[RMDB]
RNA sequence: GGGAACGACUCGAGUAGAGUCGAAAAACAUGCUACAAUGGACAGUACAGAGGGCAGCGAGACCGUGAGAUAGAGCGAAUCCCUUCAAGCUGGUCUCAGUUCGGAUCGCCGUAUGCAACUCGACGGCAGUUAAUAAGAAAUUCGUUUCUUAUUAACUAAAAGAAACAACAACAACAAC
Reactivity to 2A3 in 0.01 (KOAc 150mM, MgCl2 10mM, bicine 150mM(pH8.5), 24C), signal-to-noise 2, nucleotides 027 to 126: a000c050a010u160g000c000u160a060c040a000a240u160g000g000a010c000a080g010u240a010c000a030g000a050g010g020g010c010a020g020c000g020a030g030a060c010c030g050u050g000a030g010a020u070a020g070a010g020c030g020a020a040u080c010c000c000u000u050c010a000a010g000c010u020g020g010u000c000u000c010a000g050u070u110c000g010g010a040u010c010g020c030c010g020u030a070u070g030c000a020a040c020u010c040g000a010c000g020g030c000
Reactivity to DMS in 0.01 (KOAc 150mM, MgCl2 10mM, bicine 150mM(pH8.5), 24C), signal-to-noise 2, nucleotides 027 to 126: a030c260a040u020g000c080u000a000c210a100a070u010g000g000a240c130a260g000u000a110c180a240g000a040g010g000g000c050a060g010c010g010a040g010a030c010c020g000u010g000a030g000a030u010a040g010a020g000c010g010a050a040u020c030c020c050u010u020c030a040a140g000c010u000g010g000u000c000u000c010a070g020u030u040c050g000g000a200u000c030g000c000c080g020u010a030u030g010c060a060a060c050u010c030g010a040c040g010g010c080